RNA sequence: GGGAACGACUCGAGUAGAGUCGAAAACUCUUGUUCUCUGACCUGGGGUUCUUGGCCUCAUGGAUUCCAAGGAAUGAAAUCUUGGGCCAUACAGUGAGUGUUAUAGCUCUAUUAGAAGCCAUGGGUCGUGGAAGAGAGCUGUGGAACCCAGUGACUACCUUAAUGUAGUUUUCGAACUACAUUAAGGAAAAGAAACAACAACAACAAC
Reactivity to DMS in 0.01 (KOAc 150mM, MgCl2 10mM, bicine 150mM(pH8.5), 24C), signal-to-noise 4, nucleotides 027 to 156: c020u010c020u000u010g010u000u010c020u000c040u010g030a080c040c010u000g020g010g020g030u010u000c040u000u000g020g030c000c000u010c090a090u000g030g010a060u000u000c010c010a060a180g030g030a200a250u020g010a050a040a040u000c000u000u000g000g000g020c000c000a090u000a090c150a160g010u000g010a010g020u000g020u000u010a170u010a260g000c000u000c000u010a180u010u000a110g010a130a100g010c020c010a060u000g010g020g010u000c030g020u000g010g020a060a110g010a070g020a030g040c000u000g020u000g020g010a140a130c010c000c000a300g010u000g000a180c060u000a160
Reactivity to 2A3 in 0.01 (KOAc 150mM, MgCl2 10mM, bicine 150mM(pH8.5), 24C), signal-to-noise 9, nucleotides 027 to 156: c010u030c010u030u060g120u120u020c040u010c060u090g080a100c000c010u040g050g070g010g040u050u030c030u070u050g030g000c010c010u110c070a050u060g030g010a030u110u070c040c020a060a040g100g060a210a200u220g080a150a100a060u050c010u040u040g000g010g000c000c010a030u070a100c060a060g070u040g090a020g010u070g090u170u140a160u120a110g010c000u010c010u030a090u100u090a060g060a110a010g040c010c040a080u040g030g000g030u030c050g050u060g020g010a060a020g000a000g010a010g010c040u050g020u060g120g070a070a080c000c000c010a020g050u050g070a040c030u050a080
Chemical mapping of a 207-nucleotide RNA with DMS and 2A3. Source: RMDB library OK3TST, as collected in RNAgym. DMS adducts were read by reverse transcription with MarathonRT. High 2A3 reactivity points to a flexible backbone, as in loops and unpaired stretches. Values cover nucleotides 27 to 156. The reactions ran in a buffer of 150 mM KOAc, 10 mM MgCl2 and 150 mM bicine (pH 8.5), at 24 C.